[RMDB]
RNA sequence: GGGAACGACUCGAGUAGAGUCGAAAAGGCUGCUGCUUUGAGCGCGGCCCCCGGCUGGGCGCUGCAUCCAUGUAUUGAGCACAUCGGGCGAAAGUCCCCGGGCGACGGGGCAGAGAGUGCCAGCCCGAUUCAUAACGCAUUUCGAUGCGUUAUGAAUAAAAGAAACAACAACAACAAC
Reactivity to 2A3 in 0.01 (KOAc 150mM, MgCl2 10mM, bicine 150mM(pH8.5), 24C), signal-to-noise 9, nucleotides 027 to 126: g020g000c010u050g000c010u050g000c020u210u180u300g110a100g020c020g000c000g020g010c000c000c000c000c010g020g000c020u050g020g020g040c020g000c020u030g010c010a090u060c020c010a040u070g060u070a120u090u230g090a040g050c040a030c010a110u100c050g000g010g000c070g070a130a020a020g140u200c000c000c000c010g030g020g010c030g040a080c040g020g000g010g000c010a000g020a000g010a010g070u080g130c000c010a010g000c000c000c010g020
Reactivity to DMS in 0.01 (KOAc 150mM, MgCl2 10mM, bicine 150mM(pH8.5), 24C), signal-to-noise 7, nucleotides 027 to 126: g010g000c010u010g000c010u030g040c010u000u030u030g020a090g030c030g010c010g010g000c010c010c000c010c010g000g000c030u010g000g010g010c020g000c010u000g000c040a080u020c020c030a060u020g000u010a120u020u040g000a210g020c100a040c050a060u010c100g000g000g000c050g020a090a100a140g010u040c020c000c020c020g000g000g020c120g000a160c050g000g000g000g010c030a070g010a090g000a080g010u010g000c030c020a100g000c000c010c100g000